Record summary: An RNA of 177 nucleotides, treated with 2A3 and read out base by base. For 2A3, 557 sequencing reads were counted. It was measured as part of the RMDB library OK1LIB. The reactions ran in a buffer of 150 mM KOAc, 10 mM MgCl2 and 150 mM bicine (pH 8.5), at 24 C. 2A3 is a SHAPE reagent: it acylates the 2'-hydroxyl of flexible nucleotides of all four kinds.

RNA sequence: GGGAACGACUCGAGUAGAGUCGAAAAGAUGAGAACAUACUGUUCAGUUGGGCGAUCAGGUGACACUCCAAGUCUUGCAGGAGGUCACGAGCAAGAGAAAGAGGACGGCCUGACUUAACAAAAGAAAAUCGCUACGCGAUUUCGAUCGCGUAGCGAUAAAAGAAACAACAACAACAAC
Reactivity to 2A3 in 0.01 (KOAc 150mM, MgCl2 10mM, bicine 150mM(pH8.5), 24C), signal-to-noise 1, nucleotides 027 to 126: g100a060u170g010a000g010a100a070c150a000u300a000c010u000g000u000u000c050a000g060u010u000g000g000g040c110g040a140u040c010a010g050g060u000g000a030c170a110c160u000c000c000a050a210g100u010c060u040u120g010c150a120g030g010a000g010g020u060c000a000c020g000a000g060c110a090a040g000a000g090a210a000a000g070a070g130g000a000c030g090g000c000c000u000g000a000c000u000u080a000a000c000a000a170a000a000g100a010a090a000